[RMDB]
This 177-nucleotide RNA was probed chemically with DMS.
For DMS the reverse transcriptase was MarathonRT.
The reactions ran in a buffer of 150 mM KOAc, 10 mM MgCl2 and 150 mM bicine (pH 8.5), at 24 C.
RNA sequence: GGGAACGACUCGAGUAGAGUCGAAAAAGAACACAGGGGCAGGCAGUGGACCCAUGCAGCUCCGUGAGGGCCAGGGGUGUUUGUCUCCUUUGUGUCCUCUGUUGUAUCUCUUCACGGCCUACACAUAACUUGAUGACACAUUCGUGUGUCAUCAAGUAAAAGAAACAACAACAACAAC
Reactivity to DMS in 0.01 (KOAc 150mM, MgCl2 10mM, bicine 150mM(pH8.5), 24C), signal-to-noise 2, nucleotides 027 to 126: a060g000a100a030c040a020c040a050g020g000g010g020c260a030g010g000c020a020g000u000g000g010a050c000c000c030a090u000g010c130a180g020c000u010c020c040g010u000g000a150g010g000g000c020c020a060g000g010g020g020u010g010u000u000u010g040u000c010u010c000c010u010u000u000g020u000g020u000c010c000u010c080u010g010u010u000g000u000a070u000c020u010c020u010u000c080a060c030g000g000c040c010u000a070c090a090c150a110u010a080